[RMDB]
RNA sequence: GGGAACGACUCGAGUAGAGUCGAAAAGCUCGGAGACGAGCAAGGCUGACAAAACCCUGUCCCAACCUCCACGUGGUGUCGGCUGGAUAAUGCUGCAUUAUGUUGCAUUUAUCAACUGGGAAUUAAAAAUACGUCGCCCAUUCGUGGGCGACGUAUUAAAAGAAACAACAACAACAAC
Reactivity to 2A3 in 0.01 (KOAc 150mM, MgCl2 10mM, bicine 150mM(pH8.5), 24C), signal-to-noise 2, nucleotides 027 to 126: g000c000u020c010g000g000a040g010a000c000g000a000g000c000a000a020g040g000c000u050g000a000c000a040a300a130a200c000c000c040u040g010u000c050c000c020a090a090c000c040u140c090c070a090c070g010u030g000g020u090g010u020c000g020g020c000u070g030g000a000u010a000a000u000g000c000u010g020c000a020u000u160a200u300g020u000u020g010c000a000u030u060u020a000u010c030a000a070c020u020g060g000g000a000a090u250u160a040a120a010